RNA sequence: GGGAACGACUCGAGUAGAGUCGAAAAGUCUAGCGAUUUAGGGAUCCGAUCCGGGUUGCAGAACUCAACUGCAUGAGUAUACACGCAAGUCGCGUAUUGGCCGACCGGCCAAGGAUCUGCUAGACGACGCAUCAUUUUAUUUCGAUAAAAUGAUGCGAAAAGAAACAACAACAACAAC
Reactivity to 2A3 in 0.01 (KOAc 150mM, MgCl2 10mM, bicine 150mM(pH8.5), 24C), signal-to-noise 6, nucleotides 027 to 126: g000u000c000u010a010g010c020g100a130u060u140u260a190g070g010g020a020u000c010c010g020a030u030c020c010g000g040g040u040u020g000c010a020g030a120a070c030u030c090a040a100c060u160g010c080a070u050g010a000g060u050a040u030a100c070a010c070g020c020a080a110g270u130c010g010c040g020u050a050u070u080g060g000c010c010g070a180c110c120g000g000c000c010a010a020g010g000a000u000c030u060g000c000u010a000g000a000c000g000a010
Reactivity to DMS in 0.01 (KOAc 150mM, MgCl2 10mM, bicine 150mM(pH8.5), 24C), signal-to-noise 6, nucleotides 027 to 126: g020u000c000u000a000g010c010g010a120u000u000u010a170g010g010g000a020u000c000c010g010a110u000c110c010g000g010g010u000u000g010c020a050g010a090a060c120u010c140a060a120c080u000g010c130a080u010g000a140g020u000a070u000a080c120a070c050g020c010a080a080g000u000c030g020c090g010u000a080u000u010g020g000c020c020g000a100c180c160g000g000c030c020a030a090g000g010a010u000c000u000g020c000u000a020g000a010c010g010a110
Chemical mapping of a 177-nucleotide RNA with 2A3 and DMS. For DMS the reverse transcriptase was MarathonRT. DMS (dimethyl sulfate) methylates the pairing face of unpaired adenines and cytosines.